This 177-nucleotide RNA was probed chemically with DMS. For DMS the reverse transcriptase was MarathonRT. It was measured as part of the RMDB library OK2TRN. The RNA was probed in 150 mM KOAc, 10 mM MgCl2 and 150 mM bicine (pH 8.5) at 24 C.

[RMDB]
RNA sequence: GGGAACGACUCGAGUAGAGUCGAAAAUAAGGAAGACUCAGAGCCAGAGUGUCAAGUGCUGCAGUGAAAAAUACUGAAGAUUUUUCUUUCCAUAAGACAGCUGCAAACUUUAUAACCCAGUUCACUCGUUUAUGCAACUGUUCGCAGUUGCAUAAACAAAAGAAACAACAACAACAAC
Reactivity to DMS in 0.01 (KOAc 150mM, MgCl2 10mM, bicine 150mM(pH8.5), 24C), signal-to-noise 1, nucleotides 027 to 126: u050a160a090g010g030a040a080g000a030c060u000c100a120g000a080g050c190c050a090g000a090g020u000g020u000c090a050a120g000u000g010c140u000g000c050a020g020u000g010a010a070a050a030a040u000a030c100u000g000a080a060g020a070u000u000u010u010u000c030u000u000u000c020c080a120u000a090a100g000a110c180a130g010c010u010g020c080a050a090a050c060u000u000u000a050u000a060a200c040c010c010a190g000u010u000c000a020c080u020c300